[RMDB]
RNA sequence: GGGAACGACUCGAGUAGAGUCGAAAACCGACAAGAGGUGAUCCACUGAGGGUUUGCGGAAAAAUCACCUCCAGAGGACCCCUUCAGCGAACGGAAGAGACUGGAAGCCCCAGAGGAAGACCAUAGCAACCCGUUAGCUUCGGCUAACGGAAAAGAAACAACAACAACAAC
Reactivity to 2A3 in 0.01 (KOAc 150mM, MgCl2 10mM, bicine 150mM(pH8.5), 24C), signal-to-noise 2, nucleotides 027 to 129: c010c000g010a040c080a050a040g010a020g000g010u020g010a090u030c030c020a020c090u050g030a120g060g090g000u030u100u220g070c070g000g080a070a070a050a020a030u070c030a030c000c000u000c000c030a040g040a060g020g020a040c010c000c000c030u050u090c030a030g010c000g040a030a030c000g050g000a030a010g030a010g010a040c060u050g000g020a030a000g010c000c000c000c010a050g010a010g010g000a020a010g020a020c030c000a030u070a030g050c010a020a100c010
Reactivity to DMS in 0.01 (KOAc 150mM, MgCl2 10mM, bicine 150mM(pH8.5), 24C), signal-to-noise 3, nucleotides 027 to 129: c010c010g040a120c230a100a080g010a030g020g040u020g000a080u100c000c070a200c060u050g050a200g010g070g000u040u120u110g030c130g000g000a010a140a030a060a020u000c020a100c070c010u050c040c050a040g060a120g000g000a000c140c040c020c090u020u050c030a000g000c030g030a070a070c030g000g020a100a030g010a060g020a100c000u050g000g040a070a140g050c100c020c000c090a000g040a040g070g060a100a060g020a090c090c030a000u080a000g000c060a110a000c110